This 177-nucleotide RNA was probed chemically with 2A3 and DMS. Values cover nucleotides 27 to 126. The reactions ran in a buffer of 150 mM KOAc, 10 mM MgCl2 and 150 mM bicine (pH 8.5), at 24 C.

RNA sequence: GGGAACGACUCGAGUAGAGUCGAAAACAUGGCAUACACCGCCAGGGUGAUGCCCAGCGCCAGCGGGAUGGCGCGUGGGAUCGUGCGGGCCGGGUCGCGGACCUCCUCCCCCAGCGUGGCGAUGCGGGACUUACUCUCAGUUCGCUGAGAGUAAGUCAAAAGAAACAACAACAACAAC
Reactivity to 2A3 in 0.01 (KOAc 150mM, MgCl2 10mM, bicine 150mM(pH8.5), 24C), signal-to-noise 3, nucleotides 027 to 126: c030a090u100g030g000c020a020u110a090c050a130c070c040g070c090c030a040g160g010g060u120g000a030u130g080c000c020c000a020g010c000g020c030c010a030g060c120g100g140g070a150u070g020g010c000g000c000g020u060g010g010g040a060u070c070g030u100g040c040g010g020g000c050c060g050g000g000u040c070g000c040g120g070a070c000c020u020c000c020u010c020c000c010c000c000a010g040c040g060u050g050g010c020g000a020u080g000c000g030g050
Reactivity to DMS in 0.01 (KOAc 150mM, MgCl2 10mM, bicine 150mM(pH8.5), 24C), signal-to-noise 3, nucleotides 027 to 126: c140a080u000g010g020c030a080u000a090c070a150c060c040g000c070c080a110g020g020g020u000g000a050u000g010c030c010c050a070g010c020g020c000c010a030g030c130g010g000g000a160u000g010g010c010g010c000g040u000g010g000g010a030u000c050g030u000g010c040g020g000g010c060c030g000g010g010u000c020g010c050g000g000a120c050c020u010c030c010u000c010c010c000c010c020a140g010c070g020u000g020g020c050g010a050u000g010c050g020g000